[RMDB]
RNA sequence: GGGAACGACUCGAGUAGAGUCGAAAAAUGACCCUGUCUGUGUAACGCCAAGGGUGUGGGAGGAGCUGGCCAGCCUCGCAGCUGCUCUGAGGUAGAGAGAUGAGAACUCUGAUUCUCAUCUGUGGGUCUUUGGUGGGCCACUGAGGCGGUGGCUGGACACCCACUAGUGAUUCGUCACUAGUGGGUGAAAAGAAACAACAACAACAAC
Reactivity to 2A3 in 0.01 (KOAc 150mM, MgCl2 10mM, bicine 150mM(pH8.5), 24C), signal-to-noise 2, nucleotides 027 to 156: a000u110g090a040c010c010c000u000g060u000c030u010g090u000g030u060a060a070c050g030c020c060a060a080g100g010g030u080g010u070g030g020g020a080g000g000a040g020c040u030g010g040c030c000a020g000c010c000u040c020g060c000a010g020c000u100g010c030u000c020u090g080a040g000g140u230a020g030a020g000a000g000a070u010g000a000g010a000a000c020u020c190u300g130a300u020u000c000u000c000a010u000c000u010g030u090g010g020g010u030c020u010u020u040g130g020u100g010g050g010c020c000a020c040u060g010a010g030g000c010g000g040u020g020g000c010u010g000g000a010
Reactivity to DMS in 0.01 (KOAc 150mM, MgCl2 10mM, bicine 150mM(pH8.5), 24C), signal-to-noise 1, nucleotides 027 to 156: a130u000g000a070c020c010c010u030g030u000c040u010g010u000g010u000a080a070c050g020c050c040a100a100g000g010g030u010g020u000g000g020g010a100g030g010a100g010c000u010g030g020c020c010a100g010c000c020u000c030g000c030a080g010c020u000g020c000u000c050u000g000a080g010g060u000a040g000a180g030a030g000a020u000g000a000g000a030a020c020u020c150u030g010a190u000u000c000u000c000a010u000c000u010g030u010g010g020g020u000c010u010u020u020g020g030u000g030g000g000c030c030a040c030u020g010a170g010g050c060g010g030u000g030g000c020u000g000g010a300